[RMDB]
RNA sequence: GGGAACGACUCGAGUAGAGUCGAAAAGUGCAUUCUUAAACCCUCUUGGUAGCUCCACUGUAAAGGCUUCCAAGAUAUGAGUGAAUGCUAUAGAAAUCGCAGGGGCGUCCAAAAGGCUGCACGUUUCUACUUUAACAAUCUUCGGAUUGUUAAAGUAAAAAGAAACAACAACAACAAC
Reactivity to 2A3 in 0.01 (KOAc 150mM, MgCl2 10mM, bicine 150mM(pH8.5), 24C), signal-to-noise 8, nucleotides 027 to 126: g090u050g000c000a000u010u050c010u100u200a160a150a180c000c010c000u000c000u000u010g010g000u010a010g010c010u070c100c070a200c190u160g120u300a100a120a060g030g010c000u020u000c000c010a010a000g020a020u130a090u110g090a030g060u090g010a030a010u020g000c000u000a020u020a050g050a020a110a010u080c040g000c060a020g030g020g010g000c010g020u040c020c010a070a080a010a010g050g000c020u030g010c020a010c060g000u000u010u000c010
Reactivity to DMS in 0.01 (KOAc 150mM, MgCl2 10mM, bicine 150mM(pH8.5), 24C), signal-to-noise 6, nucleotides 027 to 126: g010u000g010c010a010u010u010c020u010u010a090a100a150c070c140c060u000c010u000u000g000g010u000a050g010c010u000c100c090a170c260u030g020u040a080a120a160g000g000c000u000u000c000c010a030a010g000a040u030a040u030g010a090g010u010g000a040a010u000g000c010u010a120u020a120g000a050a070a080u020c070g000c050a040g000g020g000g030c050g000u000c020c050a040a090a100a050g000g020c050u010g010c050a060c060g010u000u000u000c020